The record gives the reactivity of an RNA of 170 nucleotides to DMS and 2A3. For DMS, 6,319 sequencing reads were counted. The data come from the RNA Mapping Database (RMDB), library 15KLIB. For 2A3, 6,804 sequencing reads were counted.

RNA sequence: GGGAACGACUCGAGUAGAGUCGAAAAUAAUAUUCCCAUCGGGAACCUAUUACUGUGUCACCACUAAGGCUAAGUCCGUUCAACAAGAUCUUGACGUUAUUUUGCCUGGUGAGUUUUCCAAGAAGCAACCCCACCAGCUUCGGCUGGUGGAAAAGAAACAACAACAACAAC
Reactivity to DMS in 0.01 (KOAc 150mM, MgCl2 10mM, bicine 150mM(pH8.5), 24C), signal-to-noise 4, nucleotides 027 to 129: u070a060a080u000a100u000u190c020c000c000a070u080c150g010g000g030a090a130c190c020u020a120u040u090a140c160u050g070u030g030u060c080a150c070c000a010c050u040a090a090g020g010c000u000a000a000g050u040c000c060g060u060u020c040a000a030c140a070a190g010a260u040c080u000u040g020a030c060g010u070u000a070u000u130u000u010g030c070c000u040g020g000u030g030a120g030u020u000u100u130c020c050a020a030g090a090a100g020c000a100a150c010c000
Reactivity to 2A3 in 0.01 (KOAc 150mM, MgCl2 10mM, bicine 150mM(pH8.5), 24C), signal-to-noise 5, nucleotides 027 to 129: u070a000a020u040a050u040u020c000c000c000a020u100c100g050g000g010a030a040c000c050u040a100u170u110a120c080u070g030u040g050u180c030a000c030c000a040c010u070a100a060g010g010c020u020a000a000g010u000c030c000g040u160u140c010a030a050c050a200a040g070a220u060c020u020u030g000a020c000g020u140u090a020u030u040u030u010g000c000c000u010g010g000u050g020a060g020u060u010u000u090c010c020a040a050g040a020a000g080c010a010a070c000c010